[RMDB]
The record gives the reactivity of an RNA of 177 nucleotides to DMS and 2A3.
DMS adducts were read by reverse transcription with MarathonRT.
For 2A3, 2,209 sequencing reads were counted.
It was measured as part of the RMDB library OK2TRN.
The DMS profile rests on 1,175 reads.

RNA sequence: GGGAACGACUCGAGUAGAGUCGAAAAGACACGACGGAGACGUCGUGUCAAAGAGUGGGAAACCACUCAAAGAGCCACAGCUUCGGCUGUGGCUCAAGGCGCGGCGGUGUCCGCGGAACAAACCUAAACGUAUCAUCAUGUUCGCAUGAUGAUACGUAAAAGAAACAACAACAACAAC
Reactivity to DMS in 0.01 (KOAc 150mM, MgCl2 10mM, bicine 150mM(pH8.5), 24C), signal-to-noise 2, nucleotides 027 to 126: g000a000c000a020c000g000a010c000g000g000a230g000a250c010g010u000c000g030u000g000u000c000a080a040a140g020a030g040u000g000g000g020a180a110a140c000c000a000c000u000c000a040a070a110g020a000g000c000c000a000c000a000g020c000u000u000c210g030g010c000u000g080u000g000g010c000u000c000a000a000g030g040c010g020c020g020g010c030g030g020u000g040u000c030c030g040c020g000g000a080a050c220a080a090a110c050c000u000a070a170
Reactivity to 2A3 in 0.01 (KOAc 150mM, MgCl2 10mM, bicine 150mM(pH8.5), 24C), signal-to-noise 1, nucleotides 027 to 126: g000a000c020a010c010g000a010c010g050g000a080g030a070c000g010u010c010g010u000g000u020c000a020a000a000g000a000g000u010g000g020g000a000a060a100c000c000a000c010u000c000a020a050a000g020a000g040c020c010a000c020a010g060c010u100u160c300g120g000c000u000g020u000g000g000c040u010c010a000a010g010g010c000g030c000g000g010c070g080g300u130g030u020c000c000g010c000g000g000a030a010c050a030a070a030c010c010u100a150a170